[RMDB]
RNA sequence: GGGAACGACUCGAGUAGAGUCGAAAAAUGAGACUUCUGACGACGAGUGGGCUGCUGCAGUUGAUGAAGCGUUCCCUCUCGAUGAAGCAGAAGAUGUUACUGAAUCUGUGCAAGAAGAAGCACAACCGAGUCUAAUUCGGUUCGCCGAAUUAGACUCAAAAGAAACAACAACAACAAC
Reactivity to 2A3 in 0.01 (KOAc 150mM, MgCl2 10mM, bicine 150mM(pH8.5), 24C), signal-to-noise 1, nucleotides 027 to 126: a000u160g020a050g050a050c000u030u000c020u030g050a080c050g000a000c020g000a020g000u060g000g000g000c000u110g000c030u070g000c070a040g000u220u180g060a130u050g050a120a000g000c000g010u120u180c020c030c010u030c000u000c010g110a170u080g040a020a060g040c000a010g000a000a000g020a030u110g020u170u090a030c050u040g080a030a080u030c030u010g000u000g000c000a110a020g050a020a060g050a110a020g220c000a000c000a010a000c010c070
Reactivity to DMS in 0.01 (KOAc 150mM, MgCl2 10mM, bicine 150mM(pH8.5), 24C), signal-to-noise 1, nucleotides 027 to 126: a080u000g010a040g000a200c000u000u000c000u000g020a050c020g000a090c010g010a010g000u000g010g000g080c300u000g000c000u000g010c000a070g010u050u000g000a150u010g000a020a010g000c000g010u000u000c010c000c010u000c020u000c030g000a100u000g000a120a200g060c000a010g030a010a020g000a030u000g000u000u000a160c100u010g030a110a160u000c130u000g010u000g030c100a050a120g000a030a120g010a180a070g020c030a030c010a060a080c090c140